[RMDB]
An RNA of 177 nucleotides, treated with 2A3 and DMS and read out base by base.
For 2A3 the reverse transcriptase was SuperScript II with manganese.
The 2A3 profile rests on 3,057 reads.
Source: RMDB library OK2TST, as collected in RNAgym.
RNA sequence: GGGAACGACUCGAGUAGAGUCGAAAACAAAGACCCUAGGGGGCCUUUAUUCAUGCUAGGGAGUAAUCGUUUCAUGCUCUUAUGGAAAAACCGCUACGCUUUAGCCAAAGUCCAAUCGUUCAAGCUAGAUAAUGUUUCGAUUCGUCGAAACAUUAUCAAAAGAAACAACAACAACAAC
Reactivity to 2A3 in 0.01 (KOAc 150mM, MgCl2 10mM, bicine 150mM(pH8.5), 24C), signal-to-noise 3, nucleotides 027 to 126: c020a010a070a010g030a020c010c030c030u080a080g300g020g020g010g030c010c000u080u110u110a120u080u150c050a030u110g060c010u050a040g000g050g020a020g030u040a020a080u070c030g040u040u070u050c030a050u070g030c000u010c010u100u150a120u110g030g010a080a050a020a080a050c040c010g000c030u030a010c040g030c030u090u030u050a000g020c010c020a040a030a010g000u020c010c000a000a100u060c040g020u030u080c040a060a010g050c000u040a030
Reactivity to DMS in 0.01 (KOAc 150mM, MgCl2 10mM, bicine 150mM(pH8.5), 24C), signal-to-noise 3, nucleotides 027 to 126: c060a070a060a080g000a060c020c010c020u000a180g040g030g000g020g030c050c020u000u000u010a040u040u010c080a070u010g010c050u000a060g020g010g000a070g030u000a070a070u000c120g010u000u000u000c040a100u000g000c080u000c060u020u010a070u000g010g010a050a090a060a080a080c090c110g000c130u010a030c110g000c060u000u010u000a060g010c030c050a020a090a130g020u000c030c020a060a080u000c090g020u000u000c070a040a120g010c090u000a080